[RMDB]
RNA sequence: GGGAACGACUCGAGUAGAGUCGAAAAGGCGAAGCCGGACAGAUCUAUUCCCUGAUCAACCUGUUCUCCGGCGGUGCGUUAUUAAAGCUCACGGUGUUCGCGGUGGGGGUGAUGCCCUACAUCACCGCUUACGAGGCAAUUUCGAUUGCCUCGUAAGAAAAGAAACAACAACAACAAC
Reactivity to 2A3 in 0.01 (KOAc 150mM, MgCl2 10mM, bicine 150mM(pH8.5), 24C), signal-to-noise 5, nucleotides 027 to 126: g130g000c030g060a020a000g000c010c000g010g010a030c080a080g020a010u000c000u060a090u050u030c010c010c000u000g020a020u030c020a030a130c030c080u110g130u290u100c030u000c030c000g010g010c030g010g020u100g010c030g040u050u100a140u110u200a140a130a030g030c020u030c050a030c010g030g030u060g040u100u080c060g010c070g060g030u050g020g020g020g000g010u020g010a020u100g050c010c000c030u030a020c000a010u040c000a000c010c010g000
Reactivity to DMS in 0.01 (KOAc 150mM, MgCl2 10mM, bicine 150mM(pH8.5), 24C), signal-to-noise 7, nucleotides 027 to 126: g010g020c020g010a160a170g020c020c000g010g010a060c270a100g010a040u000c030u000a130u010u000c010c010c010u000g000a040u000c040a170a090c120c090u000g000u010u010c100u000c010c010g020g010c010g010g030u010g010c050g010u000u010a110u010u010a050a100a110g010c040u000c040a150c030g010g020u000g010u000u010c090g010c060g010g010u010g010g010g010g010g020u000g000a080u010g000c030c020c030u000a100c040a060u000c010a010c010c010g000
This 177-nucleotide RNA was probed chemically with 2A3 and DMS. Source: RMDB library OK2TST, as collected in RNAgym. Reactivities are given for positions 27 through 126. The DMS profile rests on 8,975 reads. DMS adducts were read by reverse transcription with MarathonRT. Values are in units of 0.01, from 0 to 300, in steps of 10. The reactions ran in a buffer of 150 mM KOAc, 10 mM MgCl2 and 150 mM bicine (pH 8.5), at 24 C. High 2A3 reactivity points to a flexible backbone, as in loops and unpaired stretches.